Annotation
Chemical mapping of a 177-nucleotide RNA with DMS. In probing experiments dimethyl sulfate is read out at A N1 and C N3, which are open when not base-paired. The RNA was probed in 150 mM KOAc, 10 mM MgCl2 and 150 mM bicine (pH 8.5) at 24 C. DMS adducts were read by reverse transcription with MarathonRT.
RNA sequence: GGGAACGACUCGAGUAGAGUCGAAAAUUAAUGAGGACCAAAUGGCUGUAAAGCCCGUAAUGCUCGAAAUGGUCCUAAACAGCCAAAUCGGGCAAAUCGAGCAAUCCCAACGAGAGCGACAAAACAACAUAGGUAACCGGUUCGCCGGUUACCUAUGAAAAGAAACAACAACAACAAC
Reactivity to DMS in 0.01 (KOAc 150mM, MgCl2 10mM, bicine 150mM(pH8.5), 24C), signal-to-noise 1, nucleotides 027 to 126: u000u000a130a100u040g030a140g040g010a050c030c020a150a130a170u000g000g010c000u010g010u000a060a140a150g000c000c010c070g030u040a080a150u000g000c000u010c010g000a010a010a210u010g000g000u000c010c000u000a010a010a190c280a190g040c000c000a050a070a250u000c100g010g000g000c010a010a070a180u000c000g000a000g030c000a080a200u000c000c000c000a040a160c090g000a060g000a050g030c130g010a040c210a130a050a050a160c110a080a230